[RMDB]
RNA sequence: GGGAACGACUCGAGUAGAGUCGAAAACAGGGUUCGGCAGGUGUAAGAAUUGGCGCGCCCACCGGCGUGGCGUGCUCGGUGUGUCCGGGCGGGAUGACUUCGGGCAACCCGGUAAAUCCGCUGCUGGUACCACUAGUACUUUCGAGUACUAGUGGUAAAAAGAAACAACAACAACAAC
Reactivity to DMS in 0.01 (KOAc 150mM, MgCl2 10mM, bicine 150mM(pH8.5), 24C), signal-to-noise 7, nucleotides 027 to 126: c070a120g000g010g010u000u010c030g010g010c030a030g000g000u000g010u010a080a120g010a100a110u010u000g010g000c030g020c050g000c030c020c050a120c110c050g000g010c070g020u010g000g000c250g020u000g000c020u000c050g010g010u000g010u000g010u000c010c020g010g000g010c050g010g010g010a090u010g000a110c040u000u010c050g020g010g000c050a040a060c040c010c010g000g000u000a050a080a110u010c040c020g010c050u000g010c030u000g000g010
Reactivity to 2A3 in 0.01 (KOAc 150mM, MgCl2 10mM, bicine 150mM(pH8.5), 24C), signal-to-noise 3, nucleotides 027 to 126: c010a030g050g000g040u070u080c010g030g000c020a030g050g030u060g030u120a090a070g060a150a120u120u120g050g000c000g010c000g000c030c010c020a020c020c020g060g000c050g020u070g020g000c010g010u020g000c030u040c020g020g010u100g010u030g000u000c020c000g000g000g000c020g030g060g020a050u130g040a050c060u150u120c120g020g000g000c030a050a040c000c000c010g000g010u050a060a070a040u030c010c000g020c040u080g000c020u030g020g060